This 177-nucleotide RNA was probed chemically with DMS and 2A3. The RNA was probed in 150 mM KOAc, 10 mM MgCl2 and 150 mM bicine (pH 8.5) at 24 C. It was measured as part of the RMDB library TTRDES.

[RMDB]
RNA sequence: GGGAACGACUCGAGUAGAGUCGAAAAGAUAUGGAGUGACCUGCCUUCAACAGCUACACCGAUCGGAAACGAUCGUUGUAGACAUGAAGAUGGUCACUCCUAAGUCAAAACUAUGGUUCGCCAUAGAGAUACAUUUAUUCUUCGGAAUAAAUGUAUCAAAAGAAACAACAACAACAAC
Reactivity to DMS in 0.01 (KOAc 150mM, MgCl2 10mM, bicine 150mM(pH8.5), 24C), signal-to-noise 9, nucleotides 027 to 126: g010a030u000a300u010g000g000a030g030u000g000a010c000c010u000g020c230c000u000u000c000a030a110c300a170g010c000u000a000c000a010c040c000g000a010u000c000g010g000a140a120a190c000g000a010u000c000g010u000u000g010u000a000g000a030c090a220u000g010a010a010g010a270u000g000g000u000c000a010c000u000c000c000u000a000a080g010u000c030a100a090a130a210c010u000a010u000g000g010u000u020c300g020c010c000a010u000a010g010a130
Reactivity to 2A3 in 0.01 (KOAc 150mM, MgCl2 10mM, bicine 150mM(pH8.5), 24C), signal-to-noise 9, nucleotides 027 to 126: g030a010u060a040u190g000g000a010g010u010g000a000c010c010u090g150c080c010u030u010c030a140a130c050a240g060c000u010a000c000a000c020c010g000a000u010c000g020g050a090a070a040c010g000a000u010c010g000u000u010g000u010a010g040a000c000a070u130g000a000a000g020a020u020g000g000u000c000a000c000u000c000c000u000a000a000g010u000c010a010a010a080a110c010u010a010u020g000g090u050u100c300g070c100c000a000u010a010g090a020